RNA sequence: GGGAACGACUCGAGUAGAGUCGAAAAGGGGUCAUAGCUCGGGCGAAAGGGAGAAUUGUACCUGAAGCCUCCACGGGUACGGAUUCAUCGAUCUUUCGUCUCUAGCGUGGCUAUGACGGAGGCACCCAAAACACAACAGUGUUCGCACUGUUGUGAACCCCUCACAUAAGUUCGCUUAUGUGAGGGGAAAAGAAACAACAACAACAAC
Reactivity to 2A3 in 0.01 (KOAc 150mM, MgCl2 10mM, bicine 150mM(pH8.5), 24C), signal-to-noise 2, nucleotides 027 to 156: g070g010g000g000u010c010a010u050a080g020c050u040c060g030g010g000c000g040a000a000a000g010g000g000a010g010a010a000u000u050g010u000a000c000c000u000g010a100a010g010c000c000u000c000c000a010c000g010g000g010u020a020c070g190g050a020u030u030c020a120u300c020g020a000u000c030u000u000u000c020g040u050c040u010c020u100a030g030c020g050u030g020g000c000u050a220u100g090a020c040g000g000a020g000g000c000a030c010c010c000a060a100a020a020c010a010c000a000a010c010a010g000u000g020u070u060c070g060c040a010c000u010g000u000u000g000u010g000a000a000